This 207-nucleotide RNA was probed chemically with DMS and 2A3. For 2A3, 803 sequencing reads were counted. Conditions: 150 mM KOAc, 10 mM MgCl2 and 150 mM bicine (pH 8.5), 24 C. Values cover nucleotides 27 to 156.
RNA sequence: GGGAACGACUCGAGUAGAGUCGAAAAGUGGCAGAGAAGUUGUAUAUUGGGCUACCAUCCAGUGAUGCAAUGGAGGCUUAUUAGGGUUGUCAGUUUUCCACAGGGUAGCAAUUAAAACUGUCUGAAAAAAACGAAACCACCUUCGGGUGGUUUCGAACAUAAAUCAUAAGUUCGCUUAUGAUUUAUGAAAAGAAACAACAACAACAAC
Reactivity to DMS in 0.01 (KOAc 150mM, MgCl2 10mM, bicine 150mM(pH8.5), 24C), signal-to-noise 2, nucleotides 027 to 156: g030u000g020g010c030a070g000a120g020a110a090g020u000u000g010u000a110u010a140u000u000g010g010g030c020u000a080c030c000a140u000c020c020a090g020u010g010a110u000g020c050a090a120u010g010g010a240g010g000c050u020u000a080u000u000a090g020g000g000u000u000g010u000c010a040g010u000u010u000u010c010c020a110c070a170g000g010g020u000a020g000c010a050a150u000u000a040a060a060a030c020u000g010u010c000u000g010a000a000a030a050a070a120a170c010g010a010a020a050c000c000a020c010c000u010u000c300g070g030g040u010g000g010u010u010u000c010g000a020a070
Reactivity to 2A3 in 0.01 (KOAc 150mM, MgCl2 10mM, bicine 150mM(pH8.5), 24C), signal-to-noise 1, nucleotides 027 to 156: g000u000g010g000c010a010g020a000g030a160a040g040u090u100g060u090a080u050a050u120u120g010g040g000c030u010a030c010c010a050u020c000c010a060g010u020g110a040u080g030c040a040a020u020g040g010a020g050g000c050u110u130a100u070u190a140g070g000g000u000u000g000u000c000a000g000u010u010u210u150c030c000a060c040a030g070g000g000u030a040g020c020a020a030u150u080a050a010a000a020c010u010g000u010c010u020g000a050a060a000a000a000a000a000c000g000a000a000a000c000c000a000c020c020u030u040c130g090g020g000u000g000g000u000u000u000c000g000a000a000